[RMDB]
RNA sequence: GGGAACGACUCGAGUAGAGUCGAAAACCUCACUACAUUUUACUGUUCCUAAAGAAUUUGUGACAGGUACAGUAAAACGUAUUGCAAGGUUUAUCAGUUCCUAUAAACAGGUAAAUAACAACAUAUGAAAAGCAAAGACUGUUCGCAGUCUUUGCAAGUUCCGCUCAUACUUCGGUAUGAGCGGAACAAAAGAAACAACAACAACAAC
Reactivity to 2A3 in 0.01 (KOAc 150mM, MgCl2 10mM, bicine 150mM(pH8.5), 24C), signal-to-noise 1, nucleotides 027 to 156: c000c000u020c000a000c050u030a000c000a030u000u000u000u000a000c000u000g030u030u010c010c010u070a130a050a040g120a140a300u300u300u200g120u120g070a070c050a050g000g000u000a000c000a000g000u050a000a000a000a000c000g000u040a000u010u030g060c230a160a000g040g040u000u030u050a120u090c000a070g080u030u000c010c000u090a100u170a070a070a010c130a030g120g000u090a120a070a070u130a150a000c220a130a000c050a080u120a050u160g090a020a300a050a000g000c000a000a000a000g000a000c030u000g000u030u080c180g010c020a000g000u000c000u000u000u000g030c000a000a000
Chemical mapping of a 207-nucleotide RNA with 2A3. Values cover nucleotides 27 to 156. Conditions: 150 mM KOAc, 10 mM MgCl2 and 150 mM bicine (pH 8.5), 24 C. For 2A3 the reverse transcriptase was SuperScript II with manganese. Values are in units of 0.01, from 0 to 300, in steps of 10.